[RMDB]
This 207-nucleotide RNA was probed chemically with DMS and 2A3. The data come from the RNA Mapping Database (RMDB), library OK3TST.
RNA sequence: GGGAACGACUCGAGUAGAGUCGAAAACACGGCAGAAGGCAAGGAAGAGCAAGUCAUGUCUUACUUGGAUGACAACAGGCAAAAAGAGAGAGACAGCUUGUGCAGGAAAACUCUUUUUAAAACCAUCAGAUCUUGUGAGACUUAUUCAUUCAAGAGACAAGUGACGCUUAUUCGUAAGCGUCACUUGAAAAGAAACAACAACAACAAC
Reactivity to DMS in 0.01 (KOAc 150mM, MgCl2 10mM, bicine 150mM(pH8.5), 24C), signal-to-noise 2, nucleotides 027 to 156: c050a170c090g020g000c030a010g000a040a090g020g020c020a070a100g000g000a030a080g040a160g000c000a020a050g030u000c060a150u000g000u000c020u010u020a050c050u000u000g010g020a130u000g010a110c140a120a150c050a090g000g000c070a010a050a090a120a030g000a090g020a140g000a220g010a140c060a150g000c070u000u000g070u000g040c040a100g000g020a020a090a070a100c000u000c020u010u010u010u010u010a020a130a080a090c040c060a170u020c050a100g000a060u000c000u000u000g030u000g020a080g000a110c100u000u000a120u000u000c030a070u000u000c050a050a070g000a210g000a180
Reactivity to 2A3 in 0.01 (KOAc 150mM, MgCl2 10mM, bicine 150mM(pH8.5), 24C), signal-to-noise 3, nucleotides 027 to 156: c040a020c030g010g000c000a020g000a050a050g010g000c040a030a060g050g010a030a030g010a000g040c020a060a010g010u030c030a070u050g040u020c000u090u080a100c020u030u070g060g030a040u040g010a020c020a070a030c030a110g040g000c000a050a040a030a070a000g040a010g000a000g000a000g010a040c010a020g030c020u140u150g030u180g050c020a020g000g030a040a020a020a010c000u040c000u010u040u010u020u120a050a130a030a060c020c010a020u070c030a040g030a120u020c010u040u060g020u070g040a030g030a030c010u070u120a040u110u090c050a030u040u060c010a020a000g050a000g010a060
The RNA was probed in 150 mM KOAc, 10 mM MgCl2 and 150 mM bicine (pH 8.5) at 24 C.